[RMDB]
RNA sequence: GGGAACGACUCGAGUAGAGUCGAAAACGAGAAGAGUCGCUAAAUCCUCGGUAACUUACUUUCAAUUGCGAUAGUAGCAUACUCGAAUUCUAACUGUUAGGUCUAAUAUCGCGGCCAAUGACUCACAUCUUGUAGACGGCUUCGGCCGUCUACAAGAAAAAGAAACAACAACAACAAC
Reactivity to DMS in 0.01 (KOAc 150mM, MgCl2 10mM, bicine 150mM(pH8.5), 24C), signal-to-noise 1, nucleotides 027 to 126: c020g000a270g000a000a070g010a060g000u000c060g000c050u000a100a020a000u000c060c000u020c000g060g000u040a020a220c130u000u000a000c020u000u010u000c040a060a150u050u000g000c040g000a060u060a020g080u000a040g000c130a290u000a300c010u000c050g000a020a220u020u000c050u000a090a210c040u000g000u000u000a000g000g000u000c000u040a040a110u000a000u000c000g000c120g000g000c040c000a000a160u000g030a120c050u020c000a070c160a130
Reactivity to 2A3 in 0.01 (KOAc 150mM, MgCl2 10mM, bicine 150mM(pH8.5), 24C), signal-to-noise 3, nucleotides 027 to 126: c110g040a030g080a160a030g000a030g030u000c000g050c020u060a030a090a160u140c000c000u060c000g130g000u030a060a070c040u050u190a040c070u030u220u090c100a120a180u220u150g020c000g020a050u000a090g020u000a030g010c070a070u040a070c040u030c110g060a040a020u280u070c020u060a070a160c120u090g050u130u120a100g000g070u090c080u050a020a200u040a060u090c030g000c020g000g020c010c000a030a030u200g000a010c000u000c020a030c000a110
Description: Chemical mapping of a 177-nucleotide RNA with DMS and 2A3. For DMS the reverse transcriptase was MarathonRT. The 2A3 profile rests on 1,057 reads. The reactions ran in a buffer of 150 mM KOAc, 10 mM MgCl2 and 150 mM bicine (pH 8.5), at 24 C. It was measured as part of the RMDB library OK1LIB.